[RMDB]
RNA sequence: GGGAACGACUCGAGUAGAGUCGAAAAGGAGCGGAUGGAGCCACGUGUUCGCUGGAACUGACCGACGUGACACCUACGCAGUACGAACUCAAUUUAAUAGACGACAACGGCUUCAAAAAUGCACUGCCCCGACCUGCUAGUUCGCUAGCAGGUCGGGAAAAGAAACAACAACAACAAC
Reactivity to 2A3 in 0.01 (KOAc 150mM, MgCl2 10mM, bicine 150mM(pH8.5), 24C), signal-to-noise 1, nucleotides 027 to 126: g000g000a020g000c010g000g000a000u000g080g040a000g000c000c080a000c030g000u010g170u110u060c120g010c060u080g090g160a080a000c040u000g010a030c000c080g040a030c000g020u000g050a000c000a030c000c000u060a000c000g000c030a000g000u040a000c120g000a050a000c010u130c180a060a020u000u030u200a170a140u070a080g050a060c080g030a000c000a000a060c060g000g000c040u060u150c200a090a090a090a000a000u050g080c060a000c050u030g010c000

Structure probing data (2A3) for a 177-nucleotide construct. The data come from the RNA Mapping Database (RMDB), library OK1LIB. Reactivities are given for positions 27 through 126.